Chemical mapping of a 207-nucleotide RNA with 2A3. The 2A3 profile rests on 691 reads.
RNA sequence: GGGAACGACUCGAGUAGAGUCGAAAAAUUCUUUUACCUUAAGAGAGCUGUAGUAAAAAGAAUCCUCUCUAUCUGACUCGAUGUAGUUAAUCAAAUUAUUUUUUUCAGUCUCAAAAACUUUAGGCUGAUACUGGGCGAUGGAUAAUAGGGGUGAGAAACUAAAAUAGCAGUUCGCUGCUAUUUUAGUAAAAGAAACAACAACAACAAC
Reactivity to 2A3 in 0.01 (KOAc 150mM, MgCl2 10mM, bicine 150mM(pH8.5), 24C), signal-to-noise 1, nucleotides 027 to 156: a000u040u020c010u030u090u000u050a090c010c010u110u120a190a020g050a050g040a040g110c080u130g030u300a070g050u020a020a040a080a080a000g030a040a050u000c000c000u020c040u000c020u030a040u010c050u010g080a080c010u040c080g000a010u110g010u090a040g010u000u130a060a190u190c020a070a040a000u060u080a140u070u300u000u050u000u000u000c030a000g040u010c000u000c010a060a130a180a200a210c080u090u120u060a000g000g000c020u000g020a020u010a070c080u010g050g000g100c030g090a080u040g020g020a000u020a230a010u040a190g000g000g000g050u010g010a080g020a040a060